[RMDB]
RNA sequence: GGGAACGACUCGAGUAGAGUCGAAAAUGCGAUGCACUUUGUUCAUUUUAACUUUGGAUAUAUGUGCCUUGCUAUGAACGCGUUCAUUUUUAAGUGACCGGACCCUAAAAUAUUCAGGUAGCAUGACAAAUACUAAUGACUUCGGUCAUUAGUAUUUAAAAGAAACAACAACAACAAC
Reactivity to 2A3 in 0.01 (KOAc 150mM, MgCl2 10mM, bicine 150mM(pH8.5), 24C), signal-to-noise 4, nucleotides 027 to 126: u060g010c000g010a010u010g000c000a000c010u010u010u020g000u000u010c020a050u020u040u060u250a200a140c100u040u040u010g010g000a000u000a000u000a000u070g000u000g000c000c010u000u000g000c000u040a060u120g080a060a020c040g020c030g080u040u030c030a040u010u030u060u080u300a200a050g010u000g000a020c020c010g010g060a070c000c000c000u070a080a140a060a050u230a130u100u180c070a030g100g070u090a040g040c070a070u060g040a050c040
Reactivity to DMS in 0.01 (KOAc 150mM, MgCl2 10mM, bicine 150mM(pH8.5), 24C), signal-to-noise 7, nucleotides 027 to 126: u020g000c010g010a030u000g000c000a010c000u000u000u010g000u000u000c000a010u000u010u020u020a090a200c250u000u010u000g000g010a010u000a010u020a010u010g010u000g010c010c080u000u000g000c010u010a080u010g010a100a090c070g010c130g010u010u000c020a020u000u010u030u020u010a050a160g020u000g000a030c020c010g010g010a090c030c010c020u010a050a060a070a080u020a060u010u010c100a070g000g010u000a040g010c080a060u010g010a130c220
This 177-nucleotide RNA was probed chemically with 2A3 and DMS. The data come from the RNA Mapping Database (RMDB), libraries RFM100 and RFMREP. Conditions: 150 mM KOAc, 10 mM MgCl2 and 150 mM bicine (pH 8.5), 24 C. Values cover nucleotides 27 to 126.